[RMDB]
RNA sequence: GGGAACGACUCGAGUAGAGUCGAAAAGUAUGGAAGAAGCUAAUCUAUUUGACGUUGUAAGAGUUGGAGAUGAACGUCUUAUAGGAGAAAUAAUAGAAAUGAGAGAAGAUAAAGCUUCUAUUCAGGUUUAUGAAGAAACUUCAGGUCUUGGUCCUGAACUAAAUCGGGAUUUCGAUCCCGAUUUAGUAAAAGAAACAACAACAACAAC
Reactivity to 2A3 in 0.01 (KOAc 150mM, MgCl2 10mM, bicine 150mM(pH8.5), 24C), signal-to-noise 4, nucleotides 027 to 156: g070u060a070u120g030g000a050a030g000a020a010g000c020u040a100a040u110c000u000a040u030u000u030g010a000c010g000u020u030g080u120a120a070g060a050g130u110u200g060g020a130g000a050u160g040a050a000c000g000u000c000u020u010a020u000a000g020g030a060g080a050a120a020u170a030a040u100a070g080a060a100a040u150g020a070g000a030g020a140a030g010a020u120a070a140a020g010c000u010u010c000u060a170u030u030c020a010g060g050u010u110u040a070u140g070a060a110g020a070a080a020c020u110u080c020a020g050g020u020c060u100u150g020g020u030c010c020u030g000a010
Reactivity to DMS in 0.01 (KOAc 150mM, MgCl2 10mM, bicine 150mM(pH8.5), 24C), signal-to-noise 2, nucleotides 027 to 156: g030u010a070u000g000g010a070a040g000a050a040g030c040u010a110a120u000c000u000a030u000u000u000g010a030c010g030u000u010g020u000a090a150g000a100g020u010u010g010g010a240g000a180u020g010a030a080c000g000u000c010u000u000a000u000a070g000g000a210g010a090a060a100u020a050a110u000a150g000a050a070a080u020g000a140g000a100g000a070a090g000a110u000a090a040a130g020c000u000u000c000u000a170u000u000c010a090g000g020u000u000u000a070u030g000a110a070g020a050a070a060c020u000u000c010a040g000g000u000c050u000u000g000g010u000c000c000u000g000a080
Description
Chemical mapping of a 207-nucleotide RNA with 2A3 and DMS. The RNA was probed in 150 mM KOAc, 10 mM MgCl2 and 150 mM bicine (pH 8.5) at 24 C. For DMS, 3,009 sequencing reads were counted. The data come from the RNA Mapping Database (RMDB), library OK3TST. For DMS the reverse transcriptase was MarathonRT. As a SHAPE reagent, 2A3 marks flexible, mostly unpaired nucleotides at the ribose 2'-OH.